[RMDB]
RNA sequence: GGGAACGACUCGAGUAGAGUCGAAAAGCCGCGUUCCCACUCCUUGAACACGUAAGGGCCUGUGCCUAUCGGUUUCGCGUUAUAGGGGUUCGCCCGGAUAUCCGUUCCUUCGUAGAGGUGUUUCGGGCGACCCGAUAAUGUUCGCAUUAUCGGGUCGAAAAGAAACAACAACAACAAC
Reactivity to DMS in 0.01 (KOAc 150mM, MgCl2 10mM, bicine 150mM(pH8.5), 24C), signal-to-noise 3, nucleotides 027 to 126: g030c010c010g000c030g000u000u000c010c000c010a210c090u020c020c060u010u000g010a100a030c120a070c050g010u010a100a150g010g000g020c010c040u060g000u060g000c100c010u000a180u040c090g000g000u010u020u000c020g000c050g010u010u010a070u000a060g020g010g000g000u030u060c050g030c000c000c000g000g020a040u000a030u000c010c000g000u040u020c010c020u020u000c210g000u020a060g000a130g000g000u000g010u000u000u000c000g010g010g030
Reactivity to 2A3 in 0.01 (KOAc 150mM, MgCl2 10mM, bicine 150mM(pH8.5), 24C), signal-to-noise 5, nucleotides 027 to 126: g060c000c010g080c010g040u030u050c000c000c000a010c030u040c000c020u020u100g070a070a020c060a010c120g060u120a100a210g000g010g000c040c060u110g050u180g070c050c010u150a150u160c050g060g000u010u090u100c050g030c010g010u040u050a150u120a110g030g000g010g000u060u120c010g010c000c000c000g000g000a020u040a050u020c000c030g110u140u190c090c040u200u260c050g100u150a030g020a010g070g040u050g030u010u010u040c000g000g000g000